An RNA of 177 nucleotides, treated with 2A3 and DMS and read out base by base.
RNA sequence: GGGAACGACUCGAGUAGAGUCGAAAACUCAGCCUUCUAAAAUGCUGGGAUUAUAGGUAUGAGCCACCAUGCCUGGCUUUCUUUCUUUCUUUCUUUUUUUAAGAUGAGGGUCUCACUGUUGCCCAGGGAUAAUUUCUGGUUUCGACCAGAAAUUAUCAAAAGAAACAACAACAACAAC
Reactivity to 2A3 in 0.01 (KOAc 150mM, MgCl2 10mM, bicine 150mM(pH8.5), 24C), signal-to-noise 1, nucleotides 027 to 126: c000u020c010a040g010c020c000u160u130c120u200a130a190a110a060u120g020c020u020g000g000g000a010u120u190a060u160a070g030g020u030a040u100g000a030g090c050c020a010c010c010a060u010g020c000c000u000g010g010c000u020u080u000c000u040u050u000c020u060u020u010c020u030u210u000c020u150u200u050u090u000u020u160a020a110g010a040u100g030a060g110g010g130u020c040u040c030a010c030u100g100u090u070g040c060c000c030a020g150g120
Reactivity to DMS in 0.01 (KOAc 150mM, MgCl2 10mM, bicine 150mM(pH8.5), 24C), signal-to-noise 1, nucleotides 027 to 126: c010u010c010a100g000c020c110u000u000c110u000a080a100a080a100u010g010c040u010g000g000g000a060u010u010a050u010a020g010g010u000a030u010g010a170g040c080c020a030c080c020a030u000g000c010c020u000g020g000c070u000u010u000c010u000u000u010c010u010u000u000c040u000u010u010c010u060u000u010u020u030u020u000a080a120g020a080u010g010a080g010g020g010u000c030u000c060a060c100u010g010u010u000g000c010c010c010a120g000g000
For DMS the reverse transcriptase was MarathonRT.
Reactivities are given for positions 27 through 126.